[RMDB]
RNA sequence: GGGAACGACUCGAGUAGAGUCGAAAAGUCUCCGGGCGGGGUGGAGCCGUCGAUGAGACACCGCCCACCUCCAGCUGUGGAGCUAACUCCCGCUGGGAGGACAUCGGUAGGUGGGCAGUUUGGGUGGCCAAAGAAAUUGGUUCGCCAAUUUCUUUGGAAAAGAAACAACAACAACAAC
Reactivity to 2A3 in 0.01 (KOAc 150mM, MgCl2 10mM, bicine 150mM(pH8.5), 24C), signal-to-noise 1, nucleotides 027 to 126: g030u000c010u000c030c020g000g020g050c010g000g000g030g010u100g050g020a020g060c000c010g020u000c010g000a190u200g030a000g000a000c070a000c000c020g000c010c000c000a010c030c000u000c010c000a010g020c010u160g060u300g260g150a020g000c000u020a120a080c010u010c000c000c070g120c130u120g000g060g000a080g010g020a020c010a060u080c110g010g030u120a010g040g000u010g000g010g000c040a040g000u060u180u120g090g000g000u050g040g000
Reactivity to DMS in 0.01 (KOAc 150mM, MgCl2 10mM, bicine 150mM(pH8.5), 24C), signal-to-noise 2, nucleotides 027 to 126: g020u000c050u000c010c160g040g020g010c030g020g000g000g030u000g010g020a140g020c000c050g020u000c030g010a100u020g000a170g010a050c050a100c070c020g020c010c000c000a030c000c000u010c010c020a080g010c010u010g030u030g010g000a050g030c070u000a100a180c010u000c000c000c010g000c150u010g010g000g010a040g000g000a070c130a040u010c160g010g020u020a010g000g030u000g000g010g010c000a030g000u000u020u020g000g000g000u000g000g000